[RMDB]
An RNA of 207 nucleotides, treated with DMS and 2A3 and read out base by base. For 2A3, 5,330 sequencing reads were counted. The data come from the RNA Mapping Database (RMDB), library ARCHII. Conditions: 150 mM KOAc, 10 mM MgCl2 and 150 mM bicine (pH 8.5), 24 C. For DMS, 2,662 sequencing reads were counted.

RNA sequence: GGGAACGACUCGAGUAGAGUCGAAAAUUGACAAGUGGUGUUGAAGGUUGGGUCUUGCGCAAUGGGAACCUGUGAACCAUGUCAGGUCCGGAAGGAAGCAGCAUUAAGCAGUGCUUCUCAUGUGCCGCGAGGUCGCCUGGCCCGAGCUAACUAUCAGGCAUUAGUCUAUGUUCGCAUAGACUAAUGCAAAAGAAACAACAACAACAAC
Reactivity to DMS in 0.01 (KOAc 150mM, MgCl2 10mM, bicine 150mM(pH8.5), 24C), signal-to-noise 1, nucleotides 027 to 156: u020u010g030a020c020a000a000g020u010g000g010u000g000u010u020g040a070a000g020g020u000u000g010g040g020u010c000u010u000g010c010g070c020a050a040u010g000g000g020a020a020c020c010u020g020u010g010a150a230c220c300a080u000g000u000c050a300g000g000u010c010c010g030g100a210a180g000g000a020a100g010c000a240g050c020a050u000u000a130a300g000c000a060g040u010g000c050u000u000c000u000c000a060u000g000u000g050c050c030g000c020g020a050g000g000u000c250g020c010c000u000g020g000c030c000c000g000a110g000c010u010a050a010c010u000a030u000c020a180g000
Reactivity to 2A3 in 0.01 (KOAc 150mM, MgCl2 10mM, bicine 150mM(pH8.5), 24C), signal-to-noise 4, nucleotides 027 to 156: u030u010g000a000c000a000a000g010u000g020g000u040g040u300u200g060a060a020g020g000u010u020g020g010g050u220c000u000u000g000c000g000c000a000a010u000g000g000g010a010a010c000c000u010g020u010g020a050a060c160c060a080u010g050u090c010a000g030g000u010c000c000g050g100a080a090g020g000a010a010g000c000a000g000c000a000u020u030a030a010g000c000a000g030u020g130c210u030u000c000u000c010a030u130g150u100g240c160c010g000c000g010a000g030g020u130c100g000c010c000u000g000g000c000c000c000g000a000g000c000u010a000a010c000u000a010u020c010a010g040